[RMDB]
RNA sequence: GGGAACGACUCGAGUAGAGUCGAAAAUGAAAGCAAAGGCACCCCCCAAAUUCAGGAAGAUUCCCCUCUCCUUGGGGAGAUCCUGACAUGAUGAAGGUGGUGCUCAGCACCAACCUGAAUUGUGAAAGUAAAUCAUGACGUUCGCGUCAUGAUUUACAAAAGAAACAACAACAACAAC
Reactivity to DMS in 0.01 (KOAc 150mM, MgCl2 10mM, bicine 150mM(pH8.5), 24C), signal-to-noise 2, nucleotides 027 to 126: u020g000a050a100a150g020c070a030a070a110g010g030c120a180c020c000c010c010c000c000a090a060a070u010u010c000a000g000g000a030a070g000a270u000u000c000c000c000c010u000c260u010c070c090u000u000g010g010g000g010a010g020a050u000c000c010u000g000a030c040a010u010g010a000u000g000a250a040g000g040u000g000g030u010g010c010u020c090a210g010c000a000c000c030a040a030c000c020u020g010a180a020u010u000g000u010g000a110a010a140
Structure probing data (DMS) for a 177-nucleotide construct. For DMS the reverse transcriptase was MarathonRT. The RNA was probed in 150 mM KOAc, 10 mM MgCl2 and 150 mM bicine (pH 8.5) at 24 C.